The record gives the reactivity of an RNA of 207 nucleotides to 2A3. For 2A3, 1,584 sequencing reads were counted. It was measured as part of the RMDB library RNAMAK.

[RMDB]
RNA sequence: GGGAACGACUCGAGUAGAGUCGAAAAGGGGUCGACCGUUUGACGAGAGCGACAUGCUCCCUGGACUGAAGCCUCCACGGUCCUGCGUAGGAUAGGAGCAACAGCGCUCUCCGAGGUCGACGGAGGCACCCAAAACACUUAUGUUCGCAUAAGUGAACCUAAUCAACGCGUUCGCGCGUUGAUUAGGAAAAGAAACAACAACAACAAC
Reactivity to 2A3 in 0.01 (KOAc 150mM, MgCl2 10mM, bicine 150mM(pH8.5), 24C), signal-to-noise 2, nucleotides 027 to 156: g130g000g040g020u000c000g000a000c000c000g040u100u170u170g010a000c000g000a000g000a000g010c000g080a130c120a260u210g000c000u010c010c000c000u000g000g000a000c000u000g010a090a020g020c000c000u000c000c000a010c050g000g000u000c000c000u020g090c150g200u290a220g010g210a190u090a190g020g000a060g000c030a090a100c060a120g030c010g000c000u020c010u000c000c000g000a010g000g000u000c000g000a000c020g000g000a000g000g010c000a020c000c010c000a010a070a000a010c000a000c000u010u010a010u030g050u090u090c300g000c130a000u000a000a000g000u010g000a000a060